About this RNA: Source: RMDB library RNAMAK, as collected in RNAgym. This 207-nucleotide RNA was probed chemically with 2A3 and DMS. 2A3 adducts were read by reverse transcription with SuperScript II with manganese. Values cover nucleotides 27 to 156. The RNA was probed in 150 mM KOAc, 10 mM MgCl2 and 150 mM bicine (pH 8.5) at 24 C. For 2A3, 7,709 sequencing reads were counted.

RNA sequence: GGGAACGACUCGAGUAGAGUCGAAAAGGGGUCACCCUUGGAUUUAGCGAUGGAGCGUGAUGGCUGAAGCCUCCACGGCCAUACGCGUUGAAAUCGCUUGUCAGGGUGACGGAGGCACCCAAAUCUACCAUUAACCGUUCGCGGUUAAUGGUAGAAAUCUAAAUUAAGAGUUCGCUCUUAAUUUAGAAAAAGAAACAACAACAACAAC
Reactivity to 2A3 in 0.01 (KOAc 150mM, MgCl2 10mM, bicine 150mM(pH8.5), 24C), signal-to-noise 5, nucleotides 027 to 156: g060g010g050g010u030c020a010c010c010c020u050u150g120g010a100u180u210u230a010g000c000g010a010u030g040g030a030g000c010g000u090g190a040u010g030g000c010u030g040a120a000g030c000c000u000c010c000a020c010g000g000c000c000a000u030a050c000g000c010g040u070u000g010a040a040a010u010c000g000c000u000u020g020u020c120a050g000g000g000u000g000a000c000g000g010a000g000g000c010a050c000c000c000a040a100a020u010c000u000a000c000c000a000u000u000a000a000c010c010g040u060u060c270g020c000g160g000u000u010a000a000u000g000g000u000a000g000a000a000a000
Reactivity to DMS in 0.01 (KOAc 150mM, MgCl2 10mM, bicine 150mM(pH8.5), 24C), signal-to-noise 2, nucleotides 027 to 156: g020g020g010g020u000c020a030c010c000c010u000u000g020g010a150u000u000u000a070g010c000g000a060u000g000g000a150g010c000g000u000g010a040u000g020g080c010u000g000a070a160g000c020c000u000c000c020a280c040g010g000c000c010a010u000a050c010g000c020g000u000u000g010a130a190a040u000c000g020c010u010u010g010u020c170a080g000g020g040u010g000a020c020g010g030a040g080g010c000a100c010c000c010a070a110a180u000c000u000a020c000c000a020u010u000a000a010c020c000g010u000u020c300g040c010g010g020u000u000a010a000u010g020g010u000a000g000a000a060a110